[RMDB]
RNA sequence: GGGAACGACUCGAGUAGAGUCGAAAACACACAUUGAAAUAUGUAGAAUCAAAUUAUUUGCAUAUUACAGUUAAGUAUGAUACAUCAUGUAUUAAUCAUCUGGGUGUGAAUUAUAGUUUCAUGAAUGAAUGUGAACGGAAACUCACGAGUAUAUAUGCAGAGAGUUCAAGUUCGCUUGAACUCUCUGAAAAGAAACAACAACAACAAC
Reactivity to 2A3 in 0.01 (KOAc 150mM, MgCl2 10mM, bicine 150mM(pH8.5), 24C), signal-to-noise 3, nucleotides 027 to 156: c040a000c010a000c010a040u090u110g080a040a040a040u060a020u020g020u110a050g120a130a080u110c110a110a110a110u300u300a090u040u090u060g010c010a000u050a010u070u150a060c020a020g030u120u120a200a030g030u050a050u100g010a030u030a030c020a050u150c050a050u230g020u030a050u030u030a080a040u070c030a030u020c030u030g070g000g000u000g010u000g020a000a000u190u060a100u050a150g030u060u000u020c050a050u040g180a150a010u140g050a070a030u130g030u010g020a030a030c040g020g070a080a060a040c010u020c020a040c030g000a010g040u020a050u100a060u030a000u280g000
Reactivity to DMS in 0.01 (KOAc 150mM, MgCl2 10mM, bicine 150mM(pH8.5), 24C), signal-to-noise 2, nucleotides 027 to 156: c020a090c030a020c020a050u000u020g010a170a060a030u010a010u000g030u000a040g010a070a070u010c040a100a130a140u000u000a090u000u010u000g000c000a020u000a030u000u000a160c030a040g030u000u010a070a190g000u000a070u010g000a040u000a020c000a150u010c130a110u020g010u000a070u010u010a100a070u000c090a050u020c020u010g010g030g030u000g020u000g010a060a060u000u010a150u000a120g000u000u000u020c010a070u000g010a070a140u010g000a080a040u010g020u010g020a040a300c000g020g010a050a060a100c040u000c030a100c040g000a110g040u000a040u010a070u010a120u020g000